[RMDB]
RNA sequence: GGGAACGACUCGAGUAGAGUCGAAAACAGGAAACUGGUUAAUCGUUUUCCUUGGUAGUAUAGCGGAAACCCUAAAUAAGAAGAACUCUAAGUGCUUGAGUAGAGUUAAAAUAAUUAGACAGGCAAUUAAGGUACUCCACGUUCGCGUGGAGUACAAGUCAUCCACUAAGUUCGCUUAGUGGAUGACAAAAGAAACAACAACAACAAC
Reactivity to 2A3 in 0.01 (KOAc 150mM, MgCl2 10mM, bicine 150mM(pH8.5), 24C), signal-to-noise 3, nucleotides 027 to 156: c010a010g000g060a080a010a030c070u150g070g050u170u180a060a050u190c040g010u010u010u030u090c010c020u020u030g060g000u030a090g010u020a060u130a110g090c110g020g060a070a090a090c020c010c030u050a100a100a070u160a160a010g110a070a000g040a060a020c000u000c010u020a000a000g030u030g170c010u010u000g010a000g000u010a000g010a010g020u150u170a000a000a010a000u110a010a010u230u010a000g000a010c000a000g000g000c000a030a030u160u170a150a000g050g000u000a000c000u000c000c000a000c010g010u020u020c170g010c000g110u010g000g000a000g000u000a000c000a000a000